[RMDB]
RNA sequence: GGGAACGACUCGAGUAGAGUCGAAAAAUACUUGCGGCCAUUUUUGCCAUACGUGAUGGAGCGCGUUUGUUAAGAUUAGCAUGCUCGGCAAAUUAAAGCUUUGCAUGCAUCGAUUCCAUCUUAACGGUGUGAUUAGUUAUAAUUGAUCUGGGCGAAAGCAUGGAAUGAUGUUCGCAUCAUUCCAUGCAAAAGAAACAACAACAACAAC
Reactivity to DMS in 0.01 (KOAc 150mM, MgCl2 10mM, bicine 150mM(pH8.5), 24C), signal-to-noise 1, nucleotides 027 to 156: a160u010a090c040u000u000g020c050g000g010c000c000a210u040u000u000u000u040g000c040c010a140u010a050c090g050u010g000a090u000g000g010a140g020c000g010c030g010u000u000u000g060u000u000a060a050g010a030u000u000a170g040c000a030u000g010c020u030c170g020g000c030a020a070a160u010u010a120a070a300g010c060u000u000u000g010c000a060u000g040c020a060u000c050g000a240u000u000c060c070a080u000c000u000u000a020a060c040g000g010u010g000u000g000a060u000u000a080g010u010u000a090u000a020a060u010u000g000a070u000c030u000g000g000g000c000g010a050a120a210
Reactivity to 2A3 in 0.01 (KOAc 150mM, MgCl2 10mM, bicine 150mM(pH8.5), 24C), signal-to-noise 3, nucleotides 027 to 156: a000u160a040c080u090u180g070c050g050g050c040c000a080u090u100u080u120u150g040c040c010a070u090a060c070g060u050g020a030u020g010g030a070g060c060g000c010g040u030u100u130g080u040u150a060a020g010a090u060u070a020g000c000a000u020g000c000u000c030g000g000c030a060a090a120u190u280a080a190a000g000c000u000u000u050g010c010a000u000g000c000a000u060c040g010a050u070u090c020c010a000u000c000u030u040a020a010c070g040g000u000g020u060g040a050u050u050a010g060u150u130a120u070a150a090u070u070g030a010u020c020u060g000g050g010c040g040a030a060a010
Source: RMDB library OK3TST, as collected in RNAgym. This 207-nucleotide RNA was probed chemically with DMS and 2A3. Reactivities are given for positions 27 through 156. For DMS, 2,659 sequencing reads were counted. DMS adducts were read by reverse transcription with MarathonRT.